[RMDB]
RNA sequence: GGGAACGACUCGAGUAGAGUCGAAAAAGUGUUAAUCGCAUGCGGAGGGCGUUGGCUGGCCUCCUAAAAAGCCGACAAAACAAUAAAUGCCGAACCUAAGGCUAAAUGCGAAAUUAUCAGUUUCUCUGAACUCUCUGAGCAAAGAUUAGCUGCUUAACACGCUGUACAAGUUCGCUUGUACAGCGUGAAAAGAAACAACAACAACAAC
Reactivity to 2A3 in 0.01 (KOAc 150mM, MgCl2 10mM, bicine 150mM(pH8.5), 24C), signal-to-noise 1, nucleotides 027 to 156: a010g130u050g020u090u000a130a110u020c040g000c060a010u050g050c050g020g040a000g040g030g020c030g010u030u020g040g010c020u000g020g130c000c000u040c050c020u090a070a040a070a000a000g050c010c000g040a050c090a020a140a000a050c090a030a180u210a200a060a140u280g000c030c000g050a030a010c010c030u020a000a110g000g000c000u020a120a080a000u080g000c010g040a000a040a220u110u080a060u080c050a020g020u020u110u010c080u000c020u030g060a090a040c000u000c000u000c100u250g060a060g010c010a100a000a000g010a010u030u000a040g030c020u050g010c010u050u000a060a000
This 207-nucleotide RNA was probed chemically with 2A3.